[RMDB]
RNA sequence: GGGAACGACUCGAGUAGAGUCGAAAAGAUAUGGACCAUGAACUACUUCCGAAACAAGCUAUGAAGUCACAGACUCGGAAACGAGUCUGUGAUGGAGCUUGAGAUAGCUGAAGCAUGGUCCUAAGUCCUACGUUGAUUGGUUCGCCAAUCAACGUAGAAAAGAAACAACAACAACAAC
Reactivity to DMS in 0.01 (KOAc 150mM, MgCl2 10mM, bicine 150mM(pH8.5), 24C), signal-to-noise 1, nucleotides 027 to 126: g000a060u030a150u010g000g010a020c000c000a090u000g000a080a060c160u000a300c070u000u010c030c090g000a190a190a220c030a000a020g010c000u000a190u050g110a110a220g000u000c000a010c000a060g000a010c000u000c010g030g000a060a040a140c010g000a020g020u000c000u000g040u030g010a010u000g000g000a000g000c000u000u000g040a050g000a040u020a040g010c300u020g010a080a020g030c000a000u000g000g000u000c000c010u000a020a040g010u000c050
Reactivity to 2A3 in 0.01 (KOAc 150mM, MgCl2 10mM, bicine 150mM(pH8.5), 24C), signal-to-noise 1, nucleotides 027 to 126: g050a000u130a030u170g020g010a000c000c020a000u030g040a050a010c090u300a050c020u300u000c050c050g140a090a070a050c000a050a050g080c000u170a240u300g090a130a000g010u000c000a000c000a000g030a020c000u010c000g000g000a020a020a080c010g000a010g020u000c000u000g000u000g000a000u000g010g020a020g000c020u000u000g000a030g050a140u300a050g120c300u080g020a040a000g020c010a020u010g060g060u000c010c000u000a020a030g000u000c000

Chemical mapping of a 177-nucleotide RNA with DMS and 2A3. 2A3 adducts were read by reverse transcription with SuperScript II with manganese. Reactivities are given for positions 27 through 126. It was measured as part of the RMDB library TTRINS. The 2A3 profile rests on 1,184 reads.